Structure probing data (2A3 and DMS) for a 177-nucleotide construct. In probing experiments dimethyl sulfate is read out at A N1 and C N3, which are open when not base-paired. The RNA was probed in 150 mM KOAc, 10 mM MgCl2 and 150 mM bicine (pH 8.5) at 24 C. The 2A3 profile rests on 1,082 reads. The DMS profile rests on 890 reads. DMS adducts were read by reverse transcription with MarathonRT. Source: RMDB library OK2TRN, as collected in RNAgym.

[RMDB]
RNA sequence: GGGAACGACUCGAGUAGAGUCGAAAAGCACCGCAUGCUCGAAGGUGCGUUGACACGAUCCGCCCAUCACCAAUAGAUCGCCAUGCGCCAACGGCAGUCGCAACGAUGGACCGCGGCCACGCGGCCGGGCUCAAUGACACUUCGGUGUCAUUGAGCCAAAAGAAACAACAACAACAAC
Reactivity to 2A3 in 0.01 (KOAc 150mM, MgCl2 10mM, bicine 150mM(pH8.5), 24C), signal-to-noise 1, nucleotides 027 to 126: g010c000a000c070c010g000c070a070u120g030c100u080c110g040a040a010g060g010u020g040c000g000u010u080g050a050c030a000c030g010a070u020c010c040g080c030c050c000a130u060c030a020c030c030a120a020u060a160g000a090u010c000g010c060c000a020u010g000c020g040c010c000a000a100c040g040g000c010a030g030u080c030g000c020a050a020c040g040a030u180g030g050a060c040c070g020c000g020g010c120c010a090c000g080c040g030g000c010c000g000
Reactivity to DMS in 0.01 (KOAc 150mM, MgCl2 10mM, bicine 150mM(pH8.5), 24C), signal-to-noise 1, nucleotides 027 to 126: g000c010a100c050c040g010c120a150u010g000c040u010c040g000a110a150g000g010u000g000c020g010u000u020g000a100c170a070c160g010a040u010c000c020g010c010c000c040a140u000c110a050c110c070a030a060u010a090g010a050u000c030g040c080c010a040u000g020c000g020c010c040a100a270c100g000g000c020a040g010u000c070g000c080a040a090c140g020a090u000g000g000a080c010c010g000c000g020g000c050c090a080c040g040c100g000g010c000c010g000